[RMDB]
RNA sequence: GGGAACGACUCGAGUAGAGUCGAAAAAGUAUAGCACCUUAAAAACGAAUCAUCUGCUAGUUCAGUAUUUUCUACUUACAAUCACUCCCUCCCAGGGCAUGUAAUUAAUUUACUGAGCUUAAAAAAAGAUACAAACAUAUUUCGAUAUGUUUGUAUCAAAAGAAACAACAACAACAAC
Reactivity to 2A3 in 0.01 (KOAc 150mM, MgCl2 10mM, bicine 150mM(pH8.5), 24C), signal-to-noise 9, nucleotides 027 to 126: a000g110u110a090u070a080g050c030a090c040c000u080u100a070a070a060a030a040c080g040a090a080u080c030a040u030c040u090g040c060u050a010g010u010u000c010a000g000u000a030u020u050u010u030c080u050a070c040u030u010a010c020a060a130u100c040a070c100u060c010c010c000u040c030c030c020a010g020g000g000c030a030u060g000u010a010a010u060u020a010a020u030u020u000a010c010u010g010a000g030c030u050u050a050a080a010a000a000a000a020
Reactivity to DMS in 0.01 (KOAc 150mM, MgCl2 10mM, bicine 150mM(pH8.5), 24C), signal-to-noise 4, nucleotides 027 to 126: a130g000u020a040u020a070g010c040a060c070c020u000u000a020a040a050a090a080c090g000a090a090u020c040a040u010c030u000g010c070u010a030g020u000u000c010a010g000u000a010u010u010u010u020c180u020a040c150u000u000a030c030a060a080u030c140a170c120u000c020c020c040u010c020c010c020a270g000g010g010c300a050u000g000u000a000a020u000u020a030a020u000u010u000a020c010u000g010a020g010c010u010u020a000a000a040a060a050a070a090